RNA sequence: GGGAACGACUCGAGUAGAGUCGAAAAAAGGCCAGCUGCUCCAGCCAGCAGGAGUUCCAGGACCACAUGUCGGAGCCUCAGCACCAGCAGCGGCUAGGGGAGAUCCAGCACAUGAGCCAAGCCUGCCAACCUAUCAAACCUUCGGGUUUGAUAGGUUAAAAGAAACAACAACAACAAC
Reactivity to DMS in 0.01 (KOAc 150mM, MgCl2 10mM, bicine 150mM(pH8.5), 24C), signal-to-noise 4, nucleotides 027 to 126: a090a060g000g010c030c050a080g000c020u000g000c030u000c030c060a100g000c070c020a120g000c010a070g020g000a090g000u000u010c100c040a120g010g010a060c040c050a090c120a080u010g010u020c060g010g010a080g000c040c010u000c070a060g000c030a110c070c080a120g020c060a070g010c070g010g000c070u010a020g030g000g000g000a100g000a100u020c100c010a070g010c050a030c070a090u000g000a140g000c030c020a060a080g010c020c000u000g010c040c100
Reactivity to 2A3 in 0.01 (KOAc 150mM, MgCl2 10mM, bicine 150mM(pH8.5), 24C), signal-to-noise 5, nucleotides 027 to 126: a000a020g080g020c030c000a040g000c020u040g010c020u030c020c000a030g030c020c020a010g030c030a020g020g040a050g020u090u020c030c000a030g040g070a060c020c010a100c060a150u150g030u060c030g040g020a060g050c000c000u020c020a010g010c010a070c050c020a050g030c000a030g060c040g040g000c010u080a120g020g010g010g000a060g010a060u050c020c010a020g040c060a020c010a070u120g020a000g010c010c010a030a010g030c010c000u020g020c020c000
An RNA of 177 nucleotides, treated with DMS and 2A3 and read out base by base. It was measured as part of the RMDB library OK1LIB. 2A3 adducts were read by reverse transcription with SuperScript II with manganese. The DMS profile rests on 6,477 reads.